The record gives the reactivity of an RNA of 207 nucleotides to DMS and 2A3. Source: RMDB library OK3TST, as collected in RNAgym. The reactions ran in a buffer of 150 mM KOAc, 10 mM MgCl2 and 150 mM bicine (pH 8.5), at 24 C.

RNA sequence: GGGAACGACUCGAGUAGAGUCGAAAAGAAACAAAUAAAGUGGCACAGAGAAAAGAAAUAGUUUUGAUCACUCUUUCUGUCAACAGUGAUUGAAGACCAUUACAUUUUAAAGGUGAAGAAAUAUGGCAGAUAUUACAUGAUUCACAUAGCUAUUCAGCUAUCAGCCUUGAUUCGUCAAGGCUGAUAGAAAAGAAACAACAACAACAAC
Reactivity to DMS in 0.01 (KOAc 150mM, MgCl2 10mM, bicine 150mM(pH8.5), 24C), signal-to-noise 2, nucleotides 027 to 156: g000a180a090a080c000a080a110a130u000a110a060a170g000u000g000g040c030a180c020a110g010a150g010a140a070a050a110g000a110a140a070u010a020g010u000u010u000u010g010a050u000c000a010c010u000c060u000u010u000c070u010g030u010c160a050a080c070a000g030u050g020a020u000u000g000a060a030g000a040c000c030a030u010u000a100c070a060u000u000u000u010a000a030a120g050g000u000g000a050a150g000a090a080a100u000a050u000g010g000c010a080g040a050u000a100u010u000a070c060a080u010g000a150u010u000c000a030c070a080u000a060g020c040u000a130u000u000c000a090g000
Reactivity to 2A3 in 0.01 (KOAc 150mM, MgCl2 10mM, bicine 150mM(pH8.5), 24C), signal-to-noise 3, nucleotides 027 to 156: g030a000a030a010c020a000a090a060u220a070a090a040g040u020g020g000c040a020c020a030g110a020g020a100a070a060a000g050a000a150a020u120a020g100u020u060u070u110g010a000u000c000a000c000u040c010u040u070u050c020u000g030u040c020a020a010c010a080g020u000g020a030u010u040g020a040a010g000a030c030c000a000u080u140a020c020a050u080u100u120u170a060a150a020g070g000u030g030a040a040g020a080a080a040u120a060u050g020g000c000a000g030a040u020a020u040u110a060c060a060u050g050a040u080u050c020a010c000a060u040a030g030c000u020a050u150u110c030a000g010